[RMDB]
This 177-nucleotide RNA was probed chemically with 2A3 and DMS. Reactivities are given for positions 27 through 126. The DMS profile rests on 2,212 reads.
RNA sequence: GGGAACGACUCGAGUAGAGUCGAAAAAGAGCUUACGAGCUCAAAUGCAUGAAUUCAUGCAUCGGGCUUCUAGUAUAGAUUUAUAUAGAGAGACUAGAGGCCCAGUGCAAGAAAUUUGUGCACAGAACACAUCCCUUUUUUUCGAAAAAGGGAUGUGAAAAGAAACAACAACAACAAC
Reactivity to 2A3 in 0.01 (KOAc 150mM, MgCl2 10mM, bicine 150mM(pH8.5), 24C), signal-to-noise 2, nucleotides 027 to 126: a000g000a000g000c020u060u060a040c230g050a020g000c000u000c030a080a120a000u010g000c000a000u000g010a030a010u010u010c000a010u050g000c000a010u030c020g000g000g010c000u000u000c000u000a000g010u000a080u110a140g040a060u060u290u030a170u040a040u210a110g150a010g060a010g030a100c000u000a000g000a000g020g000c000c010c000a000g000u010g000c000a000a050g090a080a130a090u000u000u000g000u000g060c020a000c020a060g110a100a000
Reactivity to DMS in 0.01 (KOAc 150mM, MgCl2 10mM, bicine 150mM(pH8.5), 24C), signal-to-noise 2, nucleotides 027 to 126: a040g000a000g020c000u000u000a110c150g010a040g010c000u030c020a020a110a110u010g010c010a000u000g020a010a000u010u000c000a150u000g000c000a020u000c120g000g000g000c000u000u000c000u000a000g000u000a050u020a120g000a220u050u020u000a150u060a160u030a110g020a160g000a200g000a050c000u000a000g020a030g000g000c000c000c010a000g010u010g040c000a040a050g010a040a010a030u000u000u000g000u000g000c000a070c160a140g020a090a130